Chemical mapping of a 207-nucleotide RNA with 2A3.

[RMDB]
RNA sequence: GGGAACGACUCGAGUAGAGUCGAAAAUAAAACUCUGGUGACCUUGGCACUUUGAUACACUUUACCGAUAGGGAUAGCAAGUUCGAGAGGAGUAUCAUCGCCCUCUUGAGUAGGACUUGUAAGGUUCAAGACAUGAGGAAGGGCUGAAAGAGCGAAACCCGACUAUAUGGUUCGCCAUAUAGUCGGGAAAAGAAACAACAACAACAAC
Reactivity to 2A3 in 0.01 (KOAc 150mM, MgCl2 10mM, bicine 150mM(pH8.5), 24C), signal-to-noise 1, nucleotides 027 to 156: u200a100a050a020a010c040u030c100u160g030g000u020g030a010c000c000u010u010g030g060c060a060c080u080u090u090g060a050u140a050c110a020c060u040u130u190a150c030c040g070a150u190a050g050g000g000a000u020a020g000c030a160a000g020u100u030c040g000a010g000a000g010g000a070g060u020a100u300c170a070u070c050g030c000c000c000u000c000u000u000g010a020g030u050a050g000g050a000c000u030u000g030u030a020a040g060g010u010u010c000a020a000g010a120c040a120u100g030a030g020g080a000a030g020g000g080c020u050g050a020a000a000g070a050g000c030g010a020a060a030